[RMDB]
RNA sequence: GGGAACGACUCGAGUAGAGUCGAAAAGAAGAGAAUAAGCGCGGAUAUCUCUGUCGGUAGAGCUGCAGGACCGACACCUGCGAGUACAGGGAUCAAGACCCUGUUCGCGCAAAGAUUGAAGUAGAAGAAUCCUAUCGGACUUCGGUCCGAUAGGAUUAAAAGAAACAACAACAACAAC
Reactivity to 2A3 in 0.01 (KOAc 150mM, MgCl2 10mM, bicine 150mM(pH8.5), 24C), signal-to-noise 1, nucleotides 027 to 126: g080a010a010g050a000g050a030a190u140a220a200g000c030g000c000g010g020a010u040a170u150c010u000c010u050g030u000c060g040g060u090a050g000a020g070c030u030g030c000a010g010g180a120c070c000g030a000c000a000c010c010u010g000c020g000a000g000u030a000c010a000g010g010g000a000u130c050a060a000g040a050c020c000c000u010g000u000u000c050g000c000g000c010a000a010a010g090a010u010u300g040a090a020g000u120a040g050a140a020g110
Reactivity to DMS in 0.01 (KOAc 150mM, MgCl2 10mM, bicine 150mM(pH8.5), 24C), signal-to-noise 2, nucleotides 027 to 126: g000a130a050g000a040g030a080a030u010a070a130g010c050g000c020g050g030a060u010a060u000c000u010c140u030g000u000c090g000g000u000a010g000a080g000c000u000g000c040a090g000g000a120c000c000g000a010c000a100c120c060u000g000c040g000a040g020u000a000c000a010g000g000g010a070u030c250a160a230g000a250c000c000c000u010g010u000u000c000g000c000g030c000a010a120a080g000a120u000u000g000a140a220g000u000a020g010a110a130g000